[RMDB]
RNA sequence: GGGAACGACUCGAGUAGAGUCGAAAAGUGGAGAAGACAGACUGAAAAGUAGAAAAAUAAAGUACUAGUAAGAUCAAUAUACAGGAGGGACCUACCUGGGGUGGCGUGGUCAGAGAAAGCAUGAAGCUCCUUGCUUACGAUUCGUCGUAAGCAAGGAAAAAGAAACAACAACAACAAC
Reactivity to DMS in 0.01 (KOAc 150mM, MgCl2 10mM, bicine 150mM(pH8.5), 24C), signal-to-noise 1, nucleotides 027 to 126: g080u000g000g000a090g010a110a080g000a170c080a060g010a040c030u030g000a060a010a130a050g010u000a060g000a010a080a090a070a080u010a090a050a050g010u010a060c060u020a040g010u010a030a110g000a090u030c030a060a040u000a040u000a090c050a030g010g020a070g000g000g000a070c050c000u000a030c130c080u000g000g010g030g030u000g000g040c020g040u000g000g000u000c020a030g010a080g010a070a120a070g040c040a030u010g010a060a090g010c080